[RMDB]
RNA sequence: GGGAACGACUCGAGUAGAGUCGAAAAUUGGGCAGGACCUGACUGCAGGCAUCAUGGCCUCUGUGAACUUCUCAAGGGUAUGUAUUAUCUGACAAAAACUACGAUGUCCACUAACAGGCCACUGAAAAGGUAUCUUAGUCAGUUCUGCUCAUUGCCACAUUUUAAUGGAUUUCGAUCCAUUAAAAUGAAAAGAAACAACAACAACAAC
Reactivity to DMS in 0.01 (KOAc 150mM, MgCl2 10mM, bicine 150mM(pH8.5), 24C), signal-to-noise 4, nucleotides 027 to 156: u010u000g000g020g060c020a030g020g020a090c050c040u000g010a050c010u010g010c140a070g000g010c090a170u010c060a130u010g010g010c020c000u000c000u000g020u010g010a040a040c030u000u000c030u010c090a160a210g010g020g020u000a040u010g020u010a110u010u000a070u010c050u000g000a300c070a050a060a070a120a120c080u000a110c140g010a070u000g020u000c000c010a040c020u000a060a120c070a040g000g000c010c020a050c120u000g010a050a050a080a090g040g020u000a050u000c030u000u000a060g000u000c010a050g010u000u000c030u000g010c010u000c010a020u010u000g000c010c060a140
Reactivity to 2A3 in 0.01 (KOAc 150mM, MgCl2 10mM, bicine 150mM(pH8.5), 24C), signal-to-noise 9, nucleotides 027 to 156: u050u010g000g010g000c000a000g010g000a020c040c140u010g000a000c010u020g050c120a020g030g010c010a030u020c000a010u060g010g000c000c010u010c060u010g010u000g010a020a020c010u070u030c060u060c150a100a080g040g010g020u050a030u070g130u010a120u200u080a070u240c100u120g060a050c060a050a110a050a050a050c060u100a050c080g010a010u040g000u000c010c000a000c010u040a100a030c030a070g000g010c000c010a020c130u040g020a080a090a020a030g100g010u080a060u070c010u020u010a020g000u000c000a010g000u010u000c000u000g010c000u000c000a000u000u040g020c000c000a030